[RMDB]
RNA sequence: GGGAACGACUCGAGUAGAGUCGAAAAAAUGGCACUGCAGAGCUGAUGGGCCAUGUACCUAUCCAAAAUGAGAGCCCAUCUUGCACACUGUGCUAAUUUGAGAUUCUCAUGCCUCCUACUUGGAGAGACCGCAUGCCCAGCUUCGGCUGGGCAUGAACCAAAAUGUUGAUUUCGAUCAACAUUUUGGAAAAGAAACAACAACAACAAC
Reactivity to DMS in 0.01 (KOAc 150mM, MgCl2 10mM, bicine 150mM(pH8.5), 24C), signal-to-noise 1, nucleotides 027 to 156: a020a050u010g010g030c000a090c040u000g010c060a180g040a170g050c010u000g010a060u010g020g020g060c000c020a130u000g040u000a140c070c000u040a120u010c090c080a030a070a180a190u000g010a070g000a180g000c000c020c020a010u010c020u000u020g000c010a200c030a200c090u000g030u000g040c010u000a020a110u000u000u010g010a120g000a160u000u000c000u000c010a120u010g020c060c010u010c040c010u000a090c120u010u010g010g040a080g010a200g000a160c040c080g040c060a000u000g000c000c000c030a020g010c010u010u010c290g070g000c040u000g000g000g000c000a010u000g000a030a140
Reactivity to 2A3 in 0.01 (KOAc 150mM, MgCl2 10mM, bicine 150mM(pH8.5), 24C), signal-to-noise 3, nucleotides 027 to 156: a000a000u070g020g000c040a010c030u050g010c110a060g020a050g110c020u020g000a010u010g000g010g000c010c020a000u070g040u060a070c050c040u060a090u150c060c080a150a070a000a120u190g020a140g010a030g130c010c010c000a010u000c000u030u110g000c020a030c010a010c040u020g010u030g000c010u070a100a190u000u030u040g060a090g010a020u060u010c000u010c010a020u120g050c000c000u000c000c010u120a220c120u110u140g010g000a050g020a040g020a020c090c130g010c020a010u000g000c000c000c000a000g000c000u040u050c160g090g000c040u000g000g010g000c010a000u010g000a000a010
Source: RMDB library M2RFPK, as collected in RNAgym. The record gives the reactivity of an RNA of 207 nucleotides to DMS and 2A3. Conditions: 150 mM KOAc, 10 mM MgCl2 and 150 mM bicine (pH 8.5), 24 C. High DMS reactivity at an A or C suggests that its Watson-Crick edge is free.